[RMDB]
RNA sequence: GGGAACGACUCGAGUAGAGUCGAAAAAACGCAUCCUGGACCCACGAGGAAUAUAUAGGUGUAAUGGGACAGAUAUAUACAAGGACAAAGAAUCUACCGUGCAAGUUCAUUAUCGAAGUACGUGCUUCCUGAACCCUUUGGGUUGGAAUGGAUAGGGCUCUGUGGUAGGAUUCGUCCUACCACAGAGAAAAGAAACAACAACAACAAC
Reactivity to DMS in 0.01 (KOAc 150mM, MgCl2 10mM, bicine 150mM(pH8.5), 24C), signal-to-noise 1, nucleotides 027 to 156: a000a000c090g010c030a070u010c010c030u000g050g000a170c020c000c000a040c020g000a120g000g010a080a050u010a050u000a120u010a040g010g000u010g040u010a070a130u000g020g010g000a140c070a130g000a050u000a130u010a060u000a060c050a100a050g000g020a160c050a070a080a060g000a040a080u000c020u000a040c030c040g050u000g010c050a080a120g000u000u020c060a120u010u010a100u000c010g000a080a130g080u000a070c120g000u000g020c020u000u000c030c020u000g010a110a020c040c030c010u000u000u020g020g030g000u000u000g000g010a090a050u000g000g010a120u010a030g060g020g020
Reactivity to 2A3 in 0.01 (KOAc 150mM, MgCl2 10mM, bicine 150mM(pH8.5), 24C), signal-to-noise 2, nucleotides 027 to 156: a000a000c090g010c020a020u050c000c000u020g060g030a060c010c020c020a010c070g020a010g080g020a110a030u110a020u020a020u050a090g020g060u070g050u130a110a120u100g000g010g050a030c020a010g100a040u060a000u020a000u010a130c070a060a030g030g000a010c030a050a110a000g030a030a040u050c010u070a040c050c100g000u000g040c020a050a040g000u050u140c020a060u050u240a060u220c100g050a060a000g000u030a060c020g030u050g000c000u030u030c010c000u010g040a040a070c030c010c000u080u100u200g030g030g000u040u000g040g040a060a030u030g000g000a020u080a130g020g060g000

Notes: An RNA of 207 nucleotides, treated with DMS and 2A3 and read out base by base. Reactivities are given for positions 27 through 156. For DMS the reverse transcriptase was MarathonRT. High DMS reactivity at an A or C suggests that its Watson-Crick edge is free. For DMS, 2,038 sequencing reads were counted. The reactions ran in a buffer of 150 mM KOAc, 10 mM MgCl2 and 150 mM bicine (pH 8.5), at 24 C.